[RMDB]
This 207-nucleotide RNA was probed chemically with DMS and 2A3.
The 2A3 profile rests on 2,283 reads.
Values cover nucleotides 27 to 156.
Values are in units of 0.01, from 0 to 300, in steps of 10.
The DMS profile rests on 2,866 reads.
The reactions ran in a buffer of 150 mM KOAc, 10 mM MgCl2 and 150 mM bicine (pH 8.5), at 24 C.
RNA sequence: GGGAACGACUCGAGUAGAGUCGAAAACAGUCUACCAACAGAUCCUCACCAGUAUGCCUUCCAGAAACGUGAUCCAAAUAUCCAACGACCUGGAGAACCUCCGGGAUCUUCUUCACGUGCUGGCCUUCUCUAAGAGCUGCCACUUGCCCUGGGCCAGAACGCAUACCAGAUUCGUCUGGUAUGCGUUAAAAGAAACAACAACAACAAC
Reactivity to DMS in 0.01 (KOAc 150mM, MgCl2 10mM, bicine 150mM(pH8.5), 24C), signal-to-noise 2, nucleotides 027 to 156: c050a130g010u010c050u000a170c030c040a090a210c070a140g000a100u000c010c000u000c040a060c050c020a140g060u000a050u010g030c030c010u010u000c000c040a080g000a090a080a060c010g010u020g000a050u000c040c020a050a090a110u010a110u000c020c070a050a150c030g020a130c020c020u000g010g000a070g000a140a070c050c030u000c010c040g000g020g030a070u000c010u000u000c040u000u000c040a060c050g050u000g000c020u000g000g000c030c020u000u000c050u000c030u020a020a090g000a150g030c010u010g010c040c030a050c030u020u010g040c040c000c010u000g030g030g040c020c000a060g000
Reactivity to 2A3 in 0.01 (KOAc 150mM, MgCl2 10mM, bicine 150mM(pH8.5), 24C), signal-to-noise 3, nucleotides 027 to 156: c020a010g040u000c050u100a070c050c050a040a070c040a090g060a080u030c020c030u030c030a050c010c000a040g050u050a080u110g050c010c010u050u050c020c000a000g050a040a170a030c010g020u020g020a030u040c040c060a000a140a130u180a070u110c070c030a010a050c110g040a060c030c000u010g010g010a050g040a070a080c020c030u000c020c020g070g060g000a160u020c010u070u020c010u040u020c020a030c040g010u030g030c020u000g030g000c000c000u120u090c050u000c010u040a090a010g000a020g090c010u060g040c020c040a060c020u020u030g050c020c000c020u020g020g000g000c000c010a020g020